[RMDB]
RNA sequence: GGGAACGACUCGAGUAGAGUCGAAAAAGCCUAUGGUCACUACGGUGACCAUAGGCAAUCUCUCUCGACGAAUCGUCGCUCUCUCAUGGGCGGCUUGCCUGAAAGGGCUAGUCGAGAGAGUUUCUAACAAAGGAAAACUAUUCGUAGUUUUCCUUUGAAAAGAAACAACAACAACAAC
Reactivity to 2A3 in 0.01 (KOAc 150mM, MgCl2 10mM, bicine 150mM(pH8.5), 24C), signal-to-noise 4, nucleotides 027 to 126: a010g000c000c000u010a010u010g010g000u010c000a010c020u040a030c280g130g010u000g000a000c000c000a000u000a000g010g000c000a000a000u000c000u000c000u000c010u000c000g000a000c000g010a010a020u020c020g020u010c010g000c000u000c000u010c020u020c070a250u300g000g000g000c000g000g000c000u000u020g010c000c000u030g050a060a020a040g030g000g000c000u000a000g000u000c000g000a000g000a000g000a000g000u000u000u000c000u010a050a020
Reactivity to DMS in 0.01 (KOAc 150mM, MgCl2 10mM, bicine 150mM(pH8.5), 24C), signal-to-noise 6, nucleotides 027 to 126: a080g000c000c000u010a000u000g000g000u000c000a000c000u000a100c200g050g010u000g010a010c000c000a000u000a000g010g000c000a000a010u010c010u000c000u000c000u000c010g000a010c010g010a110a010u000c250g000u000c000g010c010u000c000u000c270u020c210a080u020g000g000g000c000g010g000c010u000u000g000c000c000u000g000a130a120a160g000g000g010c000u000a030g000u000c000g000a000g000a000g000a010g000u000u000u000c000u000a060a300